[RMDB]
RNA sequence: GGGAACGACUCGAGUAGAGUCGAAAAGAUAUGGAGCGAAUACAAGUCGAUAAGCUAGGUUCGGAAACGAACCAUAGCUUUUGACGACUUGUUCGCUCCUAAGUCAAAACGCUAGUUCGCUAGCGAAGCGUUGUAUGACCUUCGGGUCAUACAACGCAAAAGAAACAACAACAACAAC
Reactivity to 2A3 in 0.01 (KOAc 150mM, MgCl2 10mM, bicine 150mM(pH8.5), 24C), signal-to-noise 1, nucleotides 027 to 126: g030a000u020a050u140g000g000a000g020c010g010a020a000u210a130c010a040a000g020u000c030g090a180u020a300a000g040c000u000a010g010g000u010u020c020g040g010a070a090a020c000g010a010a000c000c000a060u000a000g000c000u030u010u040u080g160a070c010g000a000c000u000u000g000u000u040c000g000c020u000c000c000u000a000a000g000u000c010a020a020a020a100c010g000c000u020a000g010u150u140c300g000c160u020a030g010c030g040a090a020
Reactivity to DMS in 0.01 (KOAc 150mM, MgCl2 10mM, bicine 150mM(pH8.5), 24C), signal-to-noise 1, nucleotides 027 to 126: g050a020u000a300u050g000g000a010g020c010g010a030a150u040a130c010a010a020g000u000c000g000a100u000a010a010g010c010u010a010g000g020u000u010c030g040g010a130a030a170c000g010a030a010c000c010a030u000a000g000c000u000u000u010u000g000a250c120g010a000c010u000u000g000u000u000c010g010c040u000c000c000u000a000a040g010u010c060a090a160a070a170c000g000c000u000a000g010u010u030c250g000c010u040a030g010c010g000a040a160